[RMDB]
RNA sequence: GGGAACGACUCGAGUAGAGUCGAAAAAAUUACUGGGUUGUACCCAACCAUUACGGUACCUGAAGAGUUCGCAAGUCAUGUUGCCAACUUCCAAAAAUCAGGUUAUAGUAAAUAUGUCACUGUUCAGAAACGGUGGUGUUCGCACCACCGAAAAGAAACAACAACAACAAC
Reactivity to DMS in 0.01 (KOAc 150mM, MgCl2 10mM, bicine 150mM(pH8.5), 24C), signal-to-noise 4, nucleotides 027 to 129: a070a190u000u000a070c000u010g000g080g000u000u000g040u020a090c090c030c070a180a080c170c170a180u030u030a010c140g000g000u000a040c010c000u030g060a050a170g010a030g000u030u030c300g040c000a010a110g030u000c290a040u070g030u010u010g030c030c060a000a000c020u040u010c170c110a170a060a020a160a120u020c130a000g000g050u040u010a000u120a260g040u070a030a050a120u030a060u000g000u010c150a110c250u010g030u040u040c120a000g050a120a130a000
Reactivity to 2A3 in 0.01 (KOAc 150mM, MgCl2 10mM, bicine 150mM(pH8.5), 24C), signal-to-noise 2, nucleotides 027 to 129: a000a030u110u060a080c070u040g000g000g000u030u020g000u060a030c020c000c000a000a030c010c000a020u040u030a040c000g020g000u000a000c060c040u020g010a000a000g000a030g040u010u000c080g010c000a020a020g000u130c000a120u020g090u170u000g000c030c030a000a030c040u050u060c030c030a000a180a040a020a020u000c000a000g000g000u000u030a060u050a050g000u010a000a090a090u160a010u120g020u050c080a000c000u070g010u120u010c060a010g030a000a010a000